[RMDB]
RNA sequence: GGGAACGACUCGAGUAGAGUCGAAAACUCGGCGCGCCGCCCCACGUCGCGGUAACGUGCGAUUGAGCGAGCAGGAGACGCGUCUGCUGCGUUUCGUGCAAGGUGCGGUAAGAGACCUAAUGUUCAACGAGGGUUACGCGCCGUCGGACGCCAUCGACCGCUACUACUUAUUCGUAAGUAGUAGCGGAAAAGAAACAACAACAACAAC
Reactivity to DMS in 0.01 (KOAc 150mM, MgCl2 10mM, bicine 150mM(pH8.5), 24C), signal-to-noise 1, nucleotides 027 to 156: c020u000c010g020g000c000g030c000g020c060c030g000c010c010c020c080a090c070g020u000c020g030c030g010g060u060a030a060c040g000u000g000c060g000a250u000u010g010a040g020c000g010a270g000c020a110g020g020a050g000a030c020g020c120g000u010c080u010g060c140u000g000c020g020u000u000u000c040g010u000g010c050a200a100g000g020u000g010c030g030g030u010a080a180g010a160g030a070c000c030u000a140a240u000g000u000u000c030a080a090c050g000a110g050g010g030u000u000a050c040g000c030g040c000c000g010u020c060g020g040a160c040g000c010c050a250u010c000g000a300
Reactivity to 2A3 in 0.01 (KOAc 150mM, MgCl2 10mM, bicine 150mM(pH8.5), 24C), signal-to-noise 4, nucleotides 027 to 156: c010u010c000g000g000c000g010c030g020c000c010g010c000c010c020c000a060c020g030u040c000g020c040g030g040u090a050a030c040g070u060g060c030g070a220u040u130g020a030g030c080g010a030g010c010a020g000g130a040g010a030c030g030c010g060u090c260u200g070c050u090g000c000g040u040u060u040c090g060u010g000c000a070a070g040g010u200g040c020g030g080u170a130a040g040a010g030a040c010c010u150a200a080u210g040u100u120c030a070a030c080g050a110g030g080g010u030u030a030c000g000c000g000c030c000g000u000c000g040g000a030c040g030c060c010a090u110c040g110a070